[RMDB]
Chemical mapping of a 177-nucleotide RNA with DMS and 2A3. The DMS profile rests on 1,040 reads. The data come from the RNA Mapping Database (RMDB), library TTRDES.
RNA sequence: GGGAACGACUCGAGUAGAGUCGAAAAGAUAUGGAUGUGUUGUGGAGUAGACGAUACUCGGAAACGAGUAUACCGUCGCAGAUACCACACCACAUCCUAAGUCAAAACCGCCGGUUCGCCGGCGGAAGUUAAUUUUUUGGUUCGCCAAAAAAUUAACAAAAGAAACAACAACAACAAC
Reactivity to DMS in 0.01 (KOAc 150mM, MgCl2 10mM, bicine 150mM(pH8.5), 24C), signal-to-noise 1, nucleotides 027 to 126: g000a030u000a270u020g020g010a010u000g030u010g030u000u000g020u000g000g000a100g060u000a020g010a030c020g030a090u000a010c000u010c000g000g000a100a060a100c000g020a050g010u000a010u000a030c300c040g010u000c000g010c150a120g020a160u000a050c000c000a000c010a020c080c000a010c000a000u000c020c000u000a030a060g000u030c040a100a110a180a180c030c000g000c000c010g000g000u000u010c270g020c000c000g010g000c000g000g000a010a060
Reactivity to 2A3 in 0.01 (KOAc 150mM, MgCl2 10mM, bicine 150mM(pH8.5), 24C), signal-to-noise 1, nucleotides 027 to 126: g010a020u000a000u110g000g000a000u000g010u010g000u020u020g020u050g030g150a300g150u300a120g110a000c000g010a010u000a000c010u000c000g010g000a000a020a000c010g000a020g020u010a010u020a100c270c010g000u030c000g000c020a010g070a190u300a100c010c000a000c010a000c000c030a000c000a000u000c000c000u000a030a000g000u010c020a010a000a210a300c010c000g060c020c000g130g020u050u030c240g030c120c000g000g060c060g020g000a000a010